Chemical mapping of a 207-nucleotide RNA with 2A3. It was measured as part of the RMDB library RNAMAK.
RNA sequence: GGGAACGACUCGAGUAGAGUCGAAAAGGGGUCAUACGUUUGACGCGAAAGACAUGCUGGCCAUACUGAAGCCUCCACGGUAUGGACAGCAACAGCUUUCGCCGAGUAUGACGGAGGCACCCAAAGUGCAUCGGUACCUUCGGGUACCGAUGCACAAGGUACCUUUGGGAUUCGUCCCAAAGGUACCAAAAGAAACAACAACAACAAC
Reactivity to 2A3 in 0.01 (KOAc 150mM, MgCl2 10mM, bicine 150mM(pH8.5), 24C), signal-to-noise 3, nucleotides 027 to 156: g040g000g030g010u010c010a010u010a000c010g010u080u260u220g010a000c000g000c010g030a000a000a000g070a030c220a240u300g000c010u010g030g000c010c000a000u000a000c000u010g020a120a030g020c000c000u030c010c000a010c000g000g010u010a000u010g020g010a010c000a000g000c000a040a030c050a020g010c000u000u000u000c000g000c000c000g010a000g000u000a000u010g000a000c020g000g000a000g010g010c010a020c010c020c010a100a140a000g000u000g000c000a010u000c010g060g010u060a010c050c030u220u300c300g030g000g000u000a000c000c020g000a000u000g000c000a000c000a000a000
About this RNA: The RNA was probed in 150 mM KOAc, 10 mM MgCl2 and 150 mM bicine (pH 8.5) at 24 C. For 2A3, 2,292 sequencing reads were counted.